[RMDB]
RNA sequence: GGGAACGACUCGAGUAGAGUCGAAAAAGGACGAAGUCUCGAGAUUCAACGAGAUGGUACUCGGGAAGUAAGUAAACGCGUUGGUGGAUAGAUGGAUGGGCAGGCAUGCAUGCAGUCAAUGAGGGGGGCAACCUAAAUAUUUCGAUAUUUAGGUUGCAAAAGAAACAACAACAACAAC
Reactivity to DMS in 0.01 (KOAc 150mM, MgCl2 10mM, bicine 150mM(pH8.5), 24C), signal-to-noise 7, nucleotides 027 to 126: a070g000g010a030c030g010a140a200g010u010c010u000c010g010a100g010a200u010u010c200a090a110c030g010a030g000a040u000g010g010u010a030c050u000c020g000g000g010a050a190g010u000a050a080g010u000a050a060a090c100g010c090g020u000u000g000g010u000g000g000a070u000a050g010a060u010g000g000a060u000g010g000g010c050a040g010g010c080a050u000g020c070a060u000g010c030a050g000u000c070a050a070u010g010a090g010g010g000g010g010
Reactivity to 2A3 in 0.01 (KOAc 150mM, MgCl2 10mM, bicine 150mM(pH8.5), 24C), signal-to-noise 4, nucleotides 027 to 126: a010g090g000a010c030g050a080a030g040u010c010u020c010g030a050g020a140u240u170c080a100a040c020g020a010g010a050u060g030g070u040a010c000u010c020g000g010g010a040a000g020u080a060a010g020u040a040a080a060c050g020c020g050u020u080g040g040u020g040g000a040u030a090g080a040u050g030g020a030u030g000g000g020c030a020g000g050c020a010u060g020c000a000u070g000c010a000g040u080c000a010a090u120g010a120g000g010g000g010g020

Chemical mapping of a 177-nucleotide RNA with DMS and 2A3.
Values cover nucleotides 27 to 126.
The RNA was probed in 150 mM KOAc, 10 mM MgCl2 and 150 mM bicine (pH 8.5) at 24 C.
For 2A3, 6,769 sequencing reads were counted.
For DMS, 10,963 sequencing reads were counted.
For 2A3 the reverse transcriptase was SuperScript II with manganese.